[RMDB]
RNA sequence: GGGAACGACUCGAGUAGAGUCGAAAAGAUAUGGAAUCGAUCUUCAACAGCAUACGGUAACAUGUGUAUGCAUCGGAAACGAUGCAUACACAUGUUAUUAUGACAUGAAGUAGAGAUUCCUAAGUCACGUUAACCACCAGUUCGCUGGUGGUUAACGAAAAGAAACAACAACAACAAC
Reactivity to DMS in 0.01 (KOAc 150mM, MgCl2 10mM, bicine 150mM(pH8.5), 24C), signal-to-noise 1, nucleotides 027 to 126: g000a020u000a300u010g000g000a020a000u000c000g000a280u000c000u000u000c030a000a080c250a210g010c030a000u000a110c300g020g000u060a000a000c000a010u000g000u000g000u000a000u000g000c010a000u010c010g000g010a140a040a090c000g010a000u000g000c010a000u000a000c000a000c000a000u000g000u000u000a000u000u000a060u000g010a030c050a300u000g000a020a000g000u000a110g020a300g020a020u000u010c000c010u010a020a170g000u000c040a130
The data come from the RNA Mapping Database (RMDB), library TTRINS. Structure probing data (DMS) for a 177-nucleotide construct. Reactivities are given for positions 27 through 126. Conditions: 150 mM KOAc, 10 mM MgCl2 and 150 mM bicine (pH 8.5), 24 C. For DMS, 715 sequencing reads were counted.